[RMDB]
An RNA of 177 nucleotides, treated with DMS and read out base by base. For DMS the reverse transcriptase was MarathonRT. Conditions: 150 mM KOAc, 10 mM MgCl2 and 150 mM bicine (pH 8.5), 24 C.
RNA sequence: GGGAACGACUCGAGUAGAGUCGAAAAGAGACAGAAAGAGGGCGAGUGAUCUCGGAAGGAAUCCCCCAAGCUGCCAACAGAGGAAGAAACAAGACAGAGGAGCCCCCAUGACGCUGGUGAACCAUCGCCUUAGAAUCAAGUUCGCUUGAUUCUAAGGAAAAGAAACAACAACAACAAC
Reactivity to DMS in 0.01 (KOAc 150mM, MgCl2 10mM, bicine 150mM(pH8.5), 24C), signal-to-noise 1, nucleotides 027 to 126: g010a050g020a070c040a070g000a040a070a080g000a070g010g000g020c090g010a070g010u000g020a090u000c020u000c020g000g020a100a040g010g000a100a100u000c050c020c000c020c080a090a050g000c030u000g010c040c040a080a100c060a070g010a070g000g030a060a060g030a080a100a050c040a040a090g010a070c080a040g000a110g000g050a080g030c050c010c030c020c020a060u010g010a030c060g010c050u000g000g010u000g020a070a090c030c010a040u020c150g010